[RMDB]
RNA sequence: GGGAACGACUCGAGUAGAGUCGAAAAGAUAUGGAUCGCAAUUUCGCUUUGAUCUAUGGUGAAAGCCUAGUAUAUCGGAAACGAUAUACUAGAGGGUCCAUAGGGAGCGAAAUGCGAUCCUAAGUCAGUACACGAGUACGUUCGCGUACUCGUGUACAAAAGAAACAACAACAACAAC
Reactivity to 2A3 in 0.01 (KOAc 150mM, MgCl2 10mM, bicine 150mM(pH8.5), 24C), signal-to-noise 1, nucleotides 027 to 126: g000a000u000a000u060g000g010a000u020c020g050c300a300a300u010u000u000c020g040c000u300u280u010g000a000u000c000u000a000u030g000g070u160g070a300a080a050g050c000c000u000a000g000u000a010u000a000u010c010g000g000a000a000a000c020g000a000u000a000u010a050c000u000a000g000a020g000g100g060u000c000c000a000u000a000g000g000g000a000g020c000g050a000a000a010u000g050c000g000a000u020c000c000u010a000a000g000u000c000a010

This 177-nucleotide RNA was probed chemically with 2A3. The reactions ran in a buffer of 150 mM KOAc, 10 mM MgCl2 and 150 mM bicine (pH 8.5), at 24 C.